[RMDB]
The record gives the reactivity of an RNA of 177 nucleotides to DMS. Conditions: 150 mM KOAc, 10 mM MgCl2 and 150 mM bicine (pH 8.5), 24 C. Source: RMDB library TTRINS, as collected in RNAgym. For DMS, 1,385 sequencing reads were counted.
RNA sequence: GGGAACGACUCGAGUAGAGUCGAAAAGAUAUGGAACAUAUGGAGUCUUGCUGCCUAGGACCCAAGCCUAAUCGGAAACGAUUGCGCUUGCCUAGGCAGCAAGACGUUGAAAUAUGUUCCUAAGUCAUCUGUUACUGAGGUUCGCCUCAGUAACAGAAAAAGAAACAACAACAACAAC
Reactivity to DMS in 0.01 (KOAc 150mM, MgCl2 10mM, bicine 150mM(pH8.5), 24C), signal-to-noise 2, nucleotides 027 to 126: g000a090u000a300u000g000g000a010a020c000a000u000a000u000g000g000a130g000u000c000u000u000g000c000u000g010c000c000u000a010g010g010a300c240c300c020a000a010g000c000c030u000a010a010u010c000g030g000a200a120a190c010g000a010u010u000g010c300g000c000u000u000g000c030c030u000a000g000g000c000a000g000c000a000a000g020a000c000g020u010u010g010a100a150a000u000a000u000g000u000u000c000c000u000a030a060g030u010c080a120